[RMDB]
RNA sequence: GGGAACGACUCGAGUAGAGUCGAAAAAUAUCUGCUGUACUGUAGACCAGCACUGUAAUCAUUAUCAGUUACAACGAUUUCAGAUAAGCUGCAGUCACCAGUGUUAGUUACAACAAUAGUGAAACUACGGAUAGUAUACUUUCGAGUAUACUAUCCGAAAAGAAACAACAACAACAAC
Reactivity to 2A3 in 0.01 (KOAc 150mM, MgCl2 10mM, bicine 150mM(pH8.5), 24C), signal-to-noise 9, nucleotides 027 to 126: a000u160a050u040c030u050g020c010u020g040u090a010c000u010g010u050a030g090a170c030c020a030g050c060a030c030u020g030u060a010a000u010c020a050u020u220a080u220c120a090g130u160u250a110c070a110a010c100g020a010u010u030u050c010a010g040a100u070a130a050g000c000u000g030c040a010g010u010c010a040c040c020a010g000u000g030u060u060a050g030u100u120a040c030a150a020c020a080a180u130a130g070u100g090a110a020a020c050u080a020
Reactivity to DMS in 0.01 (KOAc 150mM, MgCl2 10mM, bicine 150mM(pH8.5), 24C), signal-to-noise 4, nucleotides 027 to 126: a040u010a060u010c010u000g010c110u000g000u010a010c020u010g000u010a010g000a080c050c050a080g010c150a130c020u000g020u000a050a020u000c030a080u050u010a120u010c220a170g020u010u030a060c210a060a090c160g000a040u000u000u020c000a010g000a060u030a110a130g000c020u020g010c040a010g000u000c010a050c140c010a020g000u000g020u000u000a040g020u010u030a080c100a090a060c140a070a120u020a080g000u010g010a070a050a140c080u000a100

An RNA of 177 nucleotides, treated with 2A3 and DMS and read out base by base.
For DMS, 7,448 sequencing reads were counted.
The 2A3 profile rests on 13,481 reads.
It was measured as part of the RMDB library OK1LIB.